[RMDB]
RNA sequence: GGGAACGACUCGAGUAGAGUCGAAAACAUCUUUCCUCCCUACACAGUGACUCCAGCUUGGGAGGGGCAGGGCUAGGCUGAGCCAGCACUCCCUGUGGUGUCUGCCUGCCACGUGCAACUCUGGAGUAAAACCUGGAGAAGUUCGCUUCUCCAGGAACACUUAAUUUUGGUUCGCCAAAAUUAAGUGAAAAGAAACAACAACAACAAC
Reactivity to 2A3 in 0.01 (KOAc 150mM, MgCl2 10mM, bicine 150mM(pH8.5), 24C), signal-to-noise 6, nucleotides 027 to 156: c040a090u080c080u070u130u060c010c010u050c020c010c000u140a090c170a030c050a210g120u040g110a020c000u000c000c000a000g000c030u040u050g000g000g000a010g000g000g000g000c010a010g020g000g020c050u300a010g010g000c010u030g030a010g050c020c010a040g070c020a040c060u120c030c030c030u050g030u030g020g010u020g180u020c010u030g000c000c000u010g000c010c010a140c090g170u090g000c010a040a090c050u020c030u110g000g010a000g000u010a000a060a000a010c000c000u000g000g010a000g000a000a010g010u050u190c190g030c130u000u000c000u000c000c000a000g000g000a000a000
Reactivity to DMS in 0.01 (KOAc 150mM, MgCl2 10mM, bicine 150mM(pH8.5), 24C), signal-to-noise 2, nucleotides 027 to 156: c090a130u010c100u010u050u010c010c010u000c010c000c010u010a130c140a160c190a090g030u000g000a110c010u000c000c020a040g020c090u000u000g000g010g020a030g040g020g020g040c040a050g000g020g010c040u000a030g000g050c010u000g020a300g000c050c020a090g000c010a080c040u000c040c040c020u000g000u030g010g010u000g020u000c030u000g000c000c000u000g000c000c020a070c040g030u000g000c020a060a120c090u010c030u000g000g000a040g050u010a070a060a070a140c020c000u000g000g010a040g020a040a040g030u000u000c290g030c020u000u000c000u000c010c000a000g000g010a020a090